This 177-nucleotide RNA was probed chemically with DMS and 2A3.
The reactions ran in a buffer of 150 mM KOAc, 10 mM MgCl2 and 150 mM bicine (pH 8.5), at 24 C.
It was measured as part of the RMDB library OK1LIB.
DMS (dimethyl sulfate) methylates the pairing face of unpaired adenines and cytosines.
RNA sequence: GGGAACGACUCGAGUAGAGUCGAAAACUGCAUCUCGAUACUGAGCUCCCUGAAUUUUGUUCGUGCGUUCUUCUCCAUUUUGCAUAGAGCACGGCCACGAUUGUCAGUAACUUCGAAAAUGUGGAGCAUUUAUGCCCCAGUUCGCUGGGGCAUAAAUAAAAGAAACAACAACAACAAC
Reactivity to DMS in 0.01 (KOAc 150mM, MgCl2 10mM, bicine 150mM(pH8.5), 24C), signal-to-noise 4, nucleotides 027 to 126: c020u010g010c050a030u010c050u000c040g010a060u010a030c040u000g010a050g000c050u010c020c000c020u030g020a050a040u000u000u000u000g000u000u000c010g010u010g000c010g000u020u020c050u010u000c060u010c080c090a160u030u050u010u020g020c110a060u010a080g020a110g040c030a030c030g000g020c040c020a040c050g000a050u010u020g010u010c010a020g000u010a060a070c150u000u030c010g010a070a060a070a050u020g010u030g000g010a080g010c100
Reactivity to 2A3 in 0.01 (KOAc 150mM, MgCl2 10mM, bicine 150mM(pH8.5), 24C), signal-to-noise 5, nucleotides 027 to 126: c050u070g030c040a090u040c050u030c040g040a030u030a100c030u030g020a010g050c030u040c030c010c010u050g040a080a090u010u010u030u080g010u020u030c010g010u030g010c030g130u070u020c010u060u040c020u010c070c090a300u080u070u110u200g120c070a100u090a180g020a010g000c000a010c000g010g010c010c000a020c030g060a020u030u060g030u040c010a010g010u020a050a090c080u090u080c060g080a090a140a000a010u090g050u180g020g010a020g050c020